[RMDB]
RNA sequence: GGGAACGACUCGAGUAGAGUCGAAAAACUGGCGCGAAGCCCCGGCUGGCCAGUCGGCAACCCUCCUCCGCGGCGGGGUGCCCCGGGUGAGGACACGGCCGACUGCGACCGCAGCCGGCAAGCGCGGCUUUCACUAAACGUUCGCGUUUAGUGAAAGAAAAGAAACAACAACAACAAC
Reactivity to DMS in 0.01 (KOAc 150mM, MgCl2 10mM, bicine 150mM(pH8.5), 24C), signal-to-noise 1, nucleotides 027 to 126: a110c050u000g020g010c010g010c010g000a130a210g010c180c220c010c060g010g010c000u000g010g000c020c040a030g010u000c010g000g020c000a100a090c120c000c010u000c020c020u000c010c010g050c300g010g010c020g030g020g010g010u000g010c020c000c030c020g000g000g000u010g000a030g030g010a030c060a090c300g020g010c000c000g010a010c010u010g010c040g020a060c120c110g000c120a030g010c000c030g020g020c010a000a090g010c000g030c010g020g000
Annotation
Conditions: 150 mM KOAc, 10 mM MgCl2 and 150 mM bicine (pH 8.5), 24 C. Structure probing data (DMS) for a 177-nucleotide construct. Reactivities are given for positions 27 through 126.